Annotation
The record gives the reactivity of an RNA of 177 nucleotides to DMS and 2A3. Conditions: 150 mM KOAc, 10 mM MgCl2 and 150 mM bicine (pH 8.5), 24 C. The data come from the RNA Mapping Database (RMDB), library OK1LIB. 2A3 adducts were read by reverse transcription with SuperScript II with manganese.
RNA sequence: GGGAACGACUCGAGUAGAGUCGAAAACUCCAGCCGCCGGGAUAUAAACGCCGCAGAUAGCGCCUCGGGCGAUGCAAAAACAGCGUGUUUCAAGCAUGUGGCUCUUUGCAGCGUGGGGCGGAGACGGCCCUUAGGUAGAAUUCGUUCUACCUAAGGGAAAAGAAACAACAACAACAAC
Reactivity to DMS in 0.01 (KOAc 150mM, MgCl2 10mM, bicine 150mM(pH8.5), 24C), signal-to-noise 8, nucleotides 027 to 126: c050u010c010c020a110g010c030c010g020c010c000g010g010g010a070u030a060u020a060a140a070c060g000c010c030g030c030a060g000a100u010a060g010c040g010c010c020u020c060g000g010g020c030g000a060u020g000c030a040a060a040a050a070c090a260g010c100g020u020g010u000u010u030c160a110a190g000c020a030u000g010u010g010g010c060u000c060u000u000u010g000c000a040g000c010g020u000g000g010g000g000c010g000g000a070g010a080c110g010g010
Reactivity to 2A3 in 0.01 (KOAc 150mM, MgCl2 10mM, bicine 150mM(pH8.5), 24C), signal-to-noise 9, nucleotides 027 to 126: c010u010c000c000a020g020c010c010g020c010c000g090g030g020a050u090a020u060a200a130a010c030g010c020c010g010c020a010g050a140u130a030g050c020g010c010c010u040c030g040g040g000c010g030a030u050g000c020a020a040a050a060a050c050a050g080c040g050u080g070u080u200u220c130a130a050g010c010a020u040g020u070g080g000c020u010c020u040u040u020g020c020a040g000c040g070u080g000g030g010g000c010g010g010a030g020a020c050g080g000